Structure probing data (2A3) for a 207-nucleotide construct. Values cover nucleotides 27 to 156. The reactions ran in a buffer of 150 mM KOAc, 10 mM MgCl2 and 150 mM bicine (pH 8.5), at 24 C. Reactivities are rounded to 0.1 and cut off at 0 and 3.
RNA sequence: GGGAACGACUCGAGUAGAGUCGAAAAUACCUUGAGUAUUGCUGAAUUCAGUUUAGCGUGCAUGCUCUUGGCUAUUCUCAUAGUGAUUGUCAAAUUUGGAGUUACUUAUUCCUCAAUUCAAUAUUUAAAAAGGUGCCGAUGUUCGCAUCGGCACCAAGUAUGAACUAUCCUUCGGGAUAGUUCAUACAAAAGAAACAACAACAACAAC
Reactivity to 2A3 in 0.01 (KOAc 150mM, MgCl2 10mM, bicine 150mM(pH8.5), 24C), signal-to-noise 1, nucleotides 027 to 156: u060a000c000c000u010u010g000a000g010u020a060u240u200g010c000u000g040a250a130u160u090c110a140g140u070u070u070a070g030c050g010u050g060c050a000u000g030c000u000c000u000u010g010g000c010u050a080u080u000c060u030c010a030u080a030g210u140g070a070u010u150g170u140c060a040a070a280u140u090u170g060g000a050g020u070u080a100c040u070u080a110u130u030c000c000u030c020a020a020u180u080c020a090a090u250a170u300u180u300a160a200a090a020a020g020g010u000g000c000c000g000a000u040g030u000u170c170g000c160a000u000c000g050g000c010a020c000c000a000a000

The 2A3 profile rests on 363 reads.